[RMDB]
Notes
The record gives the reactivity of an RNA of 177 nucleotides to DMS and 2A3.
RNA sequence: GGGAACGACUCGAGUAGAGUCGAAAAAUGCUUCCACUGACGUUUCUCUUAGACCACAAACGACAUUGCUGAAGACUGUUAAAUCAGGAAAUGGUGAGAACUCGCUACUAGACGUCUGUGCGAAGAAGUUAACUCUGUCGUUCGCGACAGAGUUAACAAAAGAAACAACAACAACAAC
Reactivity to DMS in 0.01 (KOAc 150mM, MgCl2 10mM, bicine 150mM(pH8.5), 24C), signal-to-noise 1, nucleotides 027 to 126: a090u010g000c030u000u000c020c000a010c020u000g010a030c000g020u010u000u000c040u000c120u000u000a120g010a140c060c090a080c190a090a120a250c100g020a050c170a160u000u000g000c020u000g000a080a020g000a240c020u010g070u000u000a030a170a050u010c000a000g000g000a070a110a050u000g000g020u000g000a130g000a030a080c190u000c060g000c030u000a050c070u000a070g000a040c010g000u000c030u000g010u000g000c280g010a000a020g010a040a100
Reactivity to 2A3 in 0.01 (KOAc 150mM, MgCl2 10mM, bicine 150mM(pH8.5), 24C), signal-to-noise 1, nucleotides 027 to 126: a000u160g000c000u010u000c000c010a030c040u020g010a000c000g020u030u130u000c070u000c000u050u070a050g010a180c020c080a070c120a180a120a100c070g040a020c000a020u030u060g060c000u030g020a020a000g070a050c010u020g110u030u190a100a230a300u130c010a030g110g030a040a040a080u100g050g000u040g020a080g010a090a050c020u050c070g030c030u080a090c000u010a010g030a050c010g000u000c020u050g070u020g000c080g010a000a000g020a010a010
For 2A3 the reverse transcriptase was SuperScript II with manganese. It was measured as part of the RMDB library OK2TRN. In probing experiments dimethyl sulfate is read out at A N1 and C N3, which are open when not base-paired.